[RMDB]
RNA sequence: GGGAACGACUCGAGUAGAGUCGAAAAGGGCGUCAUUUCGAUGACGCCCAUACGUCUACUCCGAUUGGCGAGGACGACGCCGACGGCCGCGUUUGCCAAUCGCACCGUCCAGAUUCGUCUGGACGAACGCGGACUAAGUAUUCGUACUUAGUCCGCGAAAAGAAACAACAACAACAAC
Reactivity to DMS in 0.01 (KOAc 150mM, MgCl2 10mM, bicine 150mM(pH8.5), 24C), signal-to-noise 1, nucleotides 027 to 126: g010g000g030c000g060u000c000a000u000u000u020c210g000a010u000g010a030c000g020c000c010c000a010u000a020c230g010u000c010u000a030c000u010c020c020g010a040u000u000g000g010c010g010a070g020g010a080c040g020a110c080g020c020c040g040a100c230g000g030c030c100g030c040g000u010u000u000g000c000c030a010a020u000c020g010c110a100c200c000g010u000c000c000a020g000a020u000u030c250g010u010c000u010g000g000a000c000g000a000a040
Reactivity to 2A3 in 0.01 (KOAc 150mM, MgCl2 10mM, bicine 150mM(pH8.5), 24C), signal-to-noise 2, nucleotides 027 to 126: g010g000g020c000g000u000c000a010u040u050u180c230g100a020u010g000a000c000g020c010c000c000a000u010a000c000g020u000c000u000a010c000u000c010c000g000a010u000u020g000g000c000g040a060g140g050a080c030g030a100c020g020c010c010g300a300c160g030g010c030c030g020c020g010u000u000u080g010c010c000a000a000u000c000g000c010a060c040c040g000u000c000c000a000g000a010u030u070c150g030u000c050u000g000g000a000c000g000a050a000

Chemical mapping of a 177-nucleotide RNA with DMS and 2A3. For DMS the reverse transcriptase was MarathonRT. Values cover nucleotides 27 to 126.